RNA sequence: GGGAACGACUCGAGUAGAGUCGAAAAGUCUGAAGAGGUGGUCAGCCGCGAGGUGUCCGGCAUCAAGGCCGCCUACGAGGCCGAGCUCGGGGAUGCCCGCAAGACCCUUGACUCAGUAGCCAAGGAGCGCGCCCGCCUGCAGCUGGAGCUGAGCAAAUCUGGGAUGAUAAUUCGUUAUCAUCCCAGAAAAAGAAACAACAACAACAAC
Reactivity to DMS in 0.01 (KOAc 150mM, MgCl2 10mM, bicine 150mM(pH8.5), 24C), signal-to-noise 1, nucleotides 027 to 156: g020u000c020u000g000a120a130g000a030g030g050u000g000g000u000c020a210g050c050c060g020c050g030a100g060g000u000g000u020c010c020g000g000c040a190u000c080a080a200g000g010c000c010g030c030c060u020a050c130g020a140g030g070c020c010g000a160g020c000u000c050g020g000g050g010a130u000g020c010c000c030g000c030a040a080g000a070c010c000c010u000u000g000a020c010u000c050a220g020u000a180g060c020c000a040a070g000g010a030g020c030g010c080g000c020c030c030g020c050c010u000g000c050a120g000c060u000g010g000a300g030c010u020g020a090g020c010a100a110a130
Reactivity to 2A3 in 0.01 (KOAc 150mM, MgCl2 10mM, bicine 150mM(pH8.5), 24C), signal-to-noise 2, nucleotides 027 to 156: g040u040c030u040g050a090a000g020a030g090g010u040g060g030u030c030a020g080c090c090g030c070g020a110g000g040u030g060u090c030c040g000g030c050a080u080c080a090a090g010g000c010c000g020c020c000u030a050c030g030a080g000g040c030c000g010a030g020c050u070c060g100g000g000g000a030u050g060c030c000c020g010c010a010a060g080a060c010c000c000u040u040g020a050c000u000c040a030g050u090a020g030c010c010a040a050g070g010a060g020c030g000c010g010c000c030c000g030c030c000u060g010c040a040g010c020u030g000g090a030g000c000u030g000a010g050c030a020a090a030

Source information
An RNA of 207 nucleotides, treated with DMS and 2A3 and read out base by base. Reactivities are given for positions 27 through 156. For 2A3 the reverse transcriptase was SuperScript II with manganese. For DMS the reverse transcriptase was MarathonRT. It was measured as part of the RMDB library OK3TST.